Overview:
Source: RMDB library TTRDES, as collected in RNAgym. An RNA of 177 nucleotides, treated with DMS and read out base by base. The RNA was probed in 150 mM KOAc, 10 mM MgCl2 and 150 mM bicine (pH 8.5) at 24 C.
RNA sequence: GGGAACGACUCGAGUAGAGUCGAAAAGAUAUGGAAAGAUUCAGCUUUUGACGAGCAAGUAUUCGGAAACGAAUACGGGGCUCGAUAAGCUGAUCUUUCCUAAGUCAAAGAAGUCCUUCGGGACUUCGAUCCCAUUACGGUUCGCCGUAAUGGGAUCAAAAGAAACAACAACAACAAC
Reactivity to DMS in 0.01 (KOAc 150mM, MgCl2 10mM, bicine 150mM(pH8.5), 24C), signal-to-noise 2, nucleotides 027 to 126: g010a040u010a300u000g000g010a020a020a010g010a060u030u000c000a020g020c000u010u000u010u010g010a230c120g000a020g020c000a100a160g000u000a000u000u000c000g020g000a160a190a220c000g000a010a000u000a000c020g020g020g010g000c000u000c000g010a050u000a010a010g020c000u000g000a010u000c000u000u000u000c000c000u000a020a090g000u000c030a090a120a230g000a010a020g020u000c000c000u000u010c230g000g020g000a010c000u000u000c000

Reactivities are given for positions 27 through 126.